[RMDB]
RNA sequence: GGGAACGACUCGAGUAGAGUCGAAAAGUAGCGGCAAGAUUACAUGGAGCGCUGAGCUGGAAGAGAUCAGACUUAAAGUUGUGACGAUCCUCACAAAUGAGCCUGUUCUGGUAAUCUUCGACCCGCAGCUAAAUUAGGCUUUCGAGCCUAAUUUAGCAAAAGAAACAACAACAACAAC
Reactivity to 2A3 in 0.01 (KOAc 150mM, MgCl2 10mM, bicine 150mM(pH8.5), 24C), signal-to-noise 6, nucleotides 027 to 126: g170u150a030g020c000g000g000c030a020a010g000a000u010u010a010c080a190u140g110g020a020g010c040g040c160u110g040a040g050c020u040g060g100a140a050g060a060g000a080u040c010a020g060a080c000u040u080a130a090a140g060u100u050g050u060g030a060c160g010a020u010c000c000u030c000a030c010a030a090a100u150g020a020g000c030c050u060g030u020u000c000u010g000g000u000a000a020u000c000u010u020c050g070a140c000c030c010g000c010a000
Reactivity to DMS in 0.01 (KOAc 150mM, MgCl2 10mM, bicine 150mM(pH8.5), 24C), signal-to-noise 2, nucleotides 027 to 126: g000u030a050g020c010g000g020c090a000a030g000a020u000u000a000c030a120u000g000g010a040g030c000g000c220u020g010a220g010c030u010g020g010a130a120g010a020g010a000u000c000a000g000a050c000u010u000a040a110a130g030u000u000g000u030g010a050c180g000a150u060c260c130u010c070a010c010a010a000a060u010g000a020g020c010c000u000g000u020u010c010u000g000g010u000a000a020u000c020u010u010c110g030a100c150c020c000g010c000a100
Structure probing data (2A3 and DMS) for a 177-nucleotide construct. The reactions ran in a buffer of 150 mM KOAc, 10 mM MgCl2 and 150 mM bicine (pH 8.5), at 24 C. Source: RMDB library OK1LIB, as collected in RNAgym. For DMS, 3,369 sequencing reads were counted.